[RMDB]
Structure probing data (2A3 and DMS) for a 177-nucleotide construct. For 2A3, 3,575 sequencing reads were counted. The DMS profile rests on 7,206 reads.
RNA sequence: GGGAACGACUCGAGUAGAGUCGAAAACUGUUCAUGACAAAUAUUAAAAAAAGAGCAGAAAUCUUAUUCUACCUCUGUUAUCUUACUUUCAUUUGCAUCUGAUACAGGUUUGUGAGAGUCAUUAGACCUAAUAGUCGUAAUUCGUUACGACUAUUAGAAAAGAAACAACAACAACAAC
Reactivity to 2A3 in 0.01 (KOAc 150mM, MgCl2 10mM, bicine 150mM(pH8.5), 24C), signal-to-noise 4, nucleotides 027 to 126: c010u020g010u000u010c030a030u070g060a090c020a020a060a050u180a120u170u300a120a100a040a030a010a030a010g010a010g000c010a020g020a070a120a040u070c040u150u130a130u230u050c040u100a080c010c020u020c020u020g020u040u070a070u050c000u040u030a050c040u100u110u090c050a050u020u010u090g030c010a080u000c030u050g020a030u040a160c020a010g010g110u040u120u080g070u080g060a110g010a020g020u030c010a050u100u130a030g020a030c030
Reactivity to DMS in 0.01 (KOAc 150mM, MgCl2 10mM, bicine 150mM(pH8.5), 24C), signal-to-noise 6, nucleotides 027 to 126: c010u000g000u000u000c020a050u000g010a130c050a060a050a050u010a100u010u040a010a010a080a140a100a050a050g010a010g010c040a020g000a030a060a080u020c110u010u010a090u000u010c090u010a100c190c040u000c020u000g000u000u000a090u010c010u010u000a060c160u000u000u000c170a030u000u000u000g010c060a040u000c090u010g000a060u010a030c060a020g000g000u000u000u000g020u000g010a100g010a100g010u000c050a080u000u010a090g010a110c120
Notes:
The reactions ran in a buffer of 150 mM KOAc, 10 mM MgCl2 and 150 mM bicine (pH 8.5), at 24 C. DMS adducts were read by reverse transcription with MarathonRT.